[RMDB]
RNA sequence: GGGAACGACUCGAGUAGAGUCGAAAAUCGCAUGGACCGCACAAUGAAGAUACGGUGCUUCUGUAUCGUACUUAUUGUUUCUGGUGCGCUGUUAACCGAGGUAAAUAAUAACCGGAGUCUCUCCGGCAAAGAUACGUCAGUUCGCUGACGUAUCUUUAAAAGAAACAACAACAACAAC
Reactivity to 2A3 in 0.01 (KOAc 150mM, MgCl2 10mM, bicine 150mM(pH8.5), 24C), signal-to-noise 2, nucleotides 027 to 126: u060c000g040c020a020u080g040g050a000c030c000g040c050a000c010a010a050u190g130a080a030g050a070u010a000c010g000g000u000g010c000u180u130c050u110g000u000a030u010c000g000u010a010c010u010u060a030u010u030g040u020u080u050c080u130g030g000u020g030c030g010c060u070g020u080u080a040a030c020c030g000a050g070g090u150a110a120a120u170a070a120u150a140a060c000c000g040g000a010g100u100c090u030c020u000c220c010g010g000c000
Reactivity to DMS in 0.01 (KOAc 150mM, MgCl2 10mM, bicine 150mM(pH8.5), 24C), signal-to-noise 3, nucleotides 027 to 126: u010c090g010c060a080u010g020g030a070c300c040g020c300a020c020a040a010u010g010a050a050g010a140u010a010c010g010g030u000g010c010u000u000c220u010g040u000a010u000c020g010u000a010c020u000u000a030u000u000g010u000u000u000c070u010g030g030u000g000c020g020c070u010g010u000u000a070a120c060c010g000a100g000g000u010a040a070a070u000a060a070u010a140a170c000c000g000g000a020g000u000c140u010c020u000c010c010g000g000c150